[RMDB]
RNA sequence: GGGAACGACUCGAGUAGAGUCGAAAACCAUAACGCUGGAGACAUCCUGGAAGGGGAAAGAGGAUAGGUGGAAAAGAAGGAGCGGGCCUCCCGAUCCGAGGGGCCCAACUACCAAGUUUGGAGAGCAGUAACAGUAGACGUUCGCGUCUACUGUUACAAAAGAAACAACAACAACAAC
Reactivity to DMS in 0.01 (KOAc 150mM, MgCl2 10mM, bicine 150mM(pH8.5), 24C), signal-to-noise 1, nucleotides 027 to 126: c020c000a110u040a080a140c170g000c020u010g000g000a060g020a110c050a080u010c030c020u000g000g010a090a100g000g010g010g020a030a050a020g020a100g010g000a060u020a060g040g010u050g000g000a050a020a030a070g000a040a130g000g010a080g060c200g010g010g000c020c010u000c000c030c000g010a080u000c070c140g050a080g020g000g010g020c020c020c000a020a050c050u000a110c050c060a060a090g000u000u000u000g010g020a100g000a060g020c110a220